[RMDB]
RNA sequence: GGGAACGACUCGAGUAGAGUCGAAAAGACAGCUCUAAUCCAGAGAGCGGCUGGGUUCGAUUUAUUGAAACAUGUUGAUUCAAAAACGAUUUCUCCGAAGCAUAUUCAACCGAAUAGCAGCGAGGGACAUAGCAUACUGCUUCGGCAGUAUGCUAUGAAAAGAAACAACAACAACAAC
Reactivity to 2A3 in 0.01 (KOAc 150mM, MgCl2 10mM, bicine 150mM(pH8.5), 24C), signal-to-noise 1, nucleotides 027 to 126: g040a030c030a030g000c000u010c020u080a020a050u020c010c040a020g000a010g010a010g190c020g040g060c040u030g010g000g060u010u020c050g030a070u000u200u180a170u050u180g130a080a020a040c040a060u150g000u240u130g100a160u070u040c030a060a040a000a060a060c050g020a060u000u080u020c050u040c020c020g050a090a010g030c020a060u020a020u020u060c060a200a240c090c140g020a010a010u000a050g070c060a050g000c000g040a160g000g040g000a010
Reactivity to DMS in 0.01 (KOAc 150mM, MgCl2 10mM, bicine 150mM(pH8.5), 24C), signal-to-noise 2, nucleotides 027 to 126: g000a130c090a090g000c010u000c010u000a140a150u010c040c080a180g020a040g000a040g010c050g000g010c050u000g000g010g010u000u000c020g020a120u000u000u010a130u030u010g000a040a080a060c090a100u000g010u000u000g010a110u000u010c070a040a030a050a040a100c090g010a170u010u000u000c030u010c030c050g000a130a120g000c030a080u000a020u020u010c010a100a130c300c200g010a000a030u000a050g020c030a060g010c110g010a120g000g000g000a100
An RNA of 177 nucleotides, treated with 2A3 and DMS and read out base by base. The 2A3 profile rests on 813 reads. The DMS profile rests on 1,417 reads.